[RMDB]
RNA sequence: GGGAACGACUCGAGUAGAGUCGAAAAGAUAUGGAGUUGGAACUACGCUUCAAGCUCGAAGAACCAGAUGAGCUGUCGGAAACGACAGCUCAUCUGGGGAGAGCGUAGAGCGCCAACUCCUAAGUCACUAACUUUAGUAGUUCGCUACUAAAGUUAGAAAAGAAACAACAACAACAAC
Reactivity to 2A3 in 0.01 (KOAc 150mM, MgCl2 10mM, bicine 150mM(pH8.5), 24C), signal-to-noise 2, nucleotides 027 to 126: g060a010u100a100u230g030g000a000g020u030u020g060g000a220a100c140u300a040c300g010c000u040u050c110a190a020g000c000u030c080g300a300a060g000a080a060c040c000a000g050a040u010g000a010g060c020u040g000u090c050g100g090a200a060a080c030g030a000c000a050g030c020u050c000a020u000c020u000g000g070g000g020a040g000a000g000c000g050u080a000g000a000g050c000g000c020c000a000a000c000u000c000c010u000a020a020g020u010c000a020
Reactivity to DMS in 0.01 (KOAc 150mM, MgCl2 10mM, bicine 150mM(pH8.5), 24C), signal-to-noise 3, nucleotides 027 to 126: g000a050u020a300u010g010g010a010g040u000u000g020g010a130a080c140u020a300c030g000c010u000u000c010a300a300g020c000u010c000g020a080a190g020a270a270c000c000a040g000a070u030g010a010g030c000u000g040u010c000g020g010a150a080a280c010g010a000c000a020g010c000u000c010a000u000c000u010g020g000g000g000a110g000a010g020c000g020u020a210g000a020g000c030g000c000c000a000a030c010u010c010c000u010a000a090g010u020c040a290

Conditions: 150 mM KOAc, 10 mM MgCl2 and 150 mM bicine (pH 8.5), 24 C.
Chemical mapping of a 177-nucleotide RNA with 2A3 and DMS.
For 2A3 the reverse transcriptase was SuperScript II with manganese.
For 2A3, 2,294 sequencing reads were counted.
The DMS profile rests on 1,913 reads.